[RMDB]
An RNA of 207 nucleotides, treated with DMS and 2A3 and read out base by base. For DMS, 6,452 sequencing reads were counted. DMS (dimethyl sulfate) methylates the pairing face of unpaired adenines and cytosines. DMS adducts were read by reverse transcription with MarathonRT. It was measured as part of the RMDB library RNAMAK. Conditions: 150 mM KOAc, 10 mM MgCl2 and 150 mM bicine (pH 8.5), 24 C. Values cover nucleotides 27 to 156.
RNA sequence: GGGAACGACUCGAGUAGAGUCGAAAACGGCGGUUCGCCGCCGACUAAACCUUUGUGGUGGUGGGGCUAUAGGGAGGUACGCAUCACCCAUUGGGUGAUGGCGUACCGAAGAACUAUAGCUAGUCACCACUCUGGUCUUUCGUGUGUUCGCACACAAAUCUUCCAUAUCAUUCGUGAUAUGGAAGAUAAAAGAAACAACAACAACAAC
Reactivity to DMS in 0.01 (KOAc 150mM, MgCl2 10mM, bicine 150mM(pH8.5), 24C), signal-to-noise 2, nucleotides 027 to 156: c020g000g050c010g020g020u000u000c260g040c000c000g010c020c000g000a040c090u000a060a070a030c010c010u000u010u010g010u000g010g020u000g000g000u010g020g010g020g040c000u000a030u000a020g000g020g010a220g010g000u000a010c000g020c000a040u000c000a020c000c000c000a180u000u000g050g030g050u000g000a000u010g030g030c000g030u000a020c040c000g010a040a080g010a130a210c020u000a000u000a020g020c020u010a300g010u000c000a020c000c000a010c010u000c040u000g010g020u000c030u000u000u010c130g000u000g010u000g020u000u000c100g040c050a060c020a010c000a030a080
Reactivity to 2A3 in 0.01 (KOAc 150mM, MgCl2 10mM, bicine 150mM(pH8.5), 24C), signal-to-noise 5, nucleotides 027 to 156: c010g000g030c010g010g050u070u090c260g040c080c000g000c000c000g000a000c020u100a140a120a050c000c000u000u000u020g010u000g000g000u010g000g050u050g040g300g010g000c000u000a000u000a000g010g010g000a020g000g000u000a000c010g000c000a000u000c020a010c080c000c090a280u160u300g000g000g010u000g000a000u020g140g110c000g000u000a000c000c000g000a000a000g000a000a000c000u010a000u000a000g000c000u000a000g000u000c000a000c000c000a000c000u010c000u000g000g020u030c080u110u290u210c130g000u010g000u010g000u020u090c190g040c130a000c010a000c010a030a100